Notes:
An RNA of 177 nucleotides, treated with 2A3 and DMS and read out base by base. 2A3 adducts were read by reverse transcription with SuperScript II with manganese. The 2A3 profile rests on 2,801 reads. The RNA was probed in 150 mM KOAc, 10 mM MgCl2 and 150 mM bicine (pH 8.5) at 24 C. The data come from the RNA Mapping Database (RMDB), library RFMREP.
[RMDB]
RNA sequence: GGGAACGACUCGAGUAGAGUCGAAAAACACGCCGGCGACUCAAGGCACCUACACGAACGGACGGUUCGUGUCUCUCCCUAAGAUCGGGAGUAGCAGGGCAUAGGUUGGAAGAGAAACCUUUUGUGAACUAGUAUGGUACUUCGGUACCAUACUAGUAAAAGAAACAACAACAACAAC
Reactivity to 2A3 in 0.01 (KOAc 150mM, MgCl2 10mM, bicine 150mM(pH8.5), 24C), signal-to-noise 3, nucleotides 027 to 126: a010c040a000c070g000c020c010g050g000c060g030a050c020u020c080a060a070g030g020c000a050c030c000u000a010c020a010c020g000a020a010c010g040g300a070c110g160g000u000u010c010g010u010g020u010c000u030c000u000c010c000c030u090a190a110g060a250u120c080g020g000g000a000g020u030a020g000c040a020g020g070g000c040a040u040a050g030g040u050u060g060g050a100a030g050a050g000a090a030a050c010c040u050u100u120u060g090u020g020a020
Reactivity to DMS in 0.01 (KOAc 150mM, MgCl2 10mM, bicine 150mM(pH8.5), 24C), signal-to-noise 4, nucleotides 027 to 126: a100c060a070c090g020c080c100g000g000c050g020a130c050u000c040a080a090g010g010c070a060c030c020u000a050c020a010c020g000a010a030c010g010g030a180c240g020g010u000u000c000g000u000g010u000c050u000c020u000c010c000c020u000a140a140g000a110u000c230g000g010g000a020g000u000a050g020c070a060g000g010g000c080a070u000a030g020g010u010u000g010g010a130a070g010a130g000a050a060a080c050c030u000u010u000u010g020u000g010a070